[RMDB]
RNA sequence: GGGAACGACUCGAGUAGAGUCGAAAAAACGGUGGUGCCGACGUCAGCGCCGCCAGCGUGGUCGCCGCUCGGACGGGGCUCCCGAGGAUCCAGACCCACAAGAAAGAGAACGGGAUCUGCCACGACGUGGUUCUACCAGAUUCGUCUGGUAGAACCAAAAAGAAACAACAACAACAAC
Reactivity to 2A3 in 0.01 (KOAc 150mM, MgCl2 10mM, bicine 150mM(pH8.5), 24C), signal-to-noise 2, nucleotides 027 to 126: a010a010c100g020g010u030g020g000u030g010c030c000g060a080c040g080u090c020a000g010c010g030c010c000g010c000c000a030g090c030g070u120g010g020u080c080g010c140c020g040c070u060c060g110g040a100c030g020g010g070g000c020u060c020c000c020g010a050g040g000a020u020c020c010a040g080a080c010c070c000a040c020a040a090g220a230a110a010g150a000g060a080a020c090g050g030g000a100u000c020u030g060c010c010a070c060g000a000c020g020
Reactivity to DMS in 0.01 (KOAc 150mM, MgCl2 10mM, bicine 150mM(pH8.5), 24C), signal-to-noise 3, nucleotides 027 to 126: a070a060c130g000g020u000g030g010u000g000c030c030g000a080c110g000u000c050a160g020c010g020c060c000g040c010c020a030g010c030g000u020g010g000u000c050g020c070c050g010c010u000c060g020g000a160c100g010g000g020g000c030u000c050c020c020g010a120g010g000a060u000c010c030a100g000a170c030c010c010a120c160a100a110g000a060a100a120g000a100g000a100a120c080g000g000g000a050u000c050u000g010c050c040a060c060g000a070c110g020

Structure probing data (2A3 and DMS) for a 177-nucleotide construct. The RNA was probed in 150 mM KOAc, 10 mM MgCl2 and 150 mM bicine (pH 8.5) at 24 C. For 2A3, 1,902 sequencing reads were counted. Source: RMDB library OK2TRN, as collected in RNAgym.